[RMDB]
RNA sequence: GGGAACGACUCGAGUAGAGUCGAAAAGAAAGAAAGAAAACCGUGUGGAAAAGAAUGGCUAUAACCACAGAAACCUGAGGAAACAGGAAGCCACAACGAAAGCCAGGUGGUUAGCACACGGAAGAAAGACUGCUGAUAUGUUCGCAUAUCAGCAGUCAAAAGAAACAACAACAACAAC
Reactivity to DMS in 0.01 (KOAc 150mM, MgCl2 10mM, bicine 150mM(pH8.5), 24C), signal-to-noise 2, nucleotides 027 to 126: g000a070a120a100g020a100a110a130g000a160a070a160a100c020c020g020u000g000u010g000g060a000a080a090a080g000a150a140u010g000g000c000u000a110u000a030a000c020c020a030c080a110g000a200a060a070c020c010u020g050a140g040g000a190a100a160c050a000g000g000a100a110g000c060c010a020c170a080a070c130g000a190a030a050g000c030c150a070g000g010u010g000g000u000u000a040g000c020a000c000a000c010g010g010a010a060g040a080a060a120
Reactivity to 2A3 in 0.01 (KOAc 150mM, MgCl2 10mM, bicine 150mM(pH8.5), 24C), signal-to-noise 2, nucleotides 027 to 126: g040a000a010a000g070a060a150a000g040a010a040a000a000c000c040g000u000g000u000g050g080a050a050a020a120g060a110a200u120g000g000c010u040a050u010a220a010c030c010a030c010a030g140a050a040a000c000c000u040g030a120g130g170a130a020a050c000a020g000g010a030a020g020c010c040a030c060a150a040c000g130a150a000a000g050c010c020a010g000g010u000g000g000u040u040a040g010c010a000c000a000c000g020g000a010a010g070a070a060a000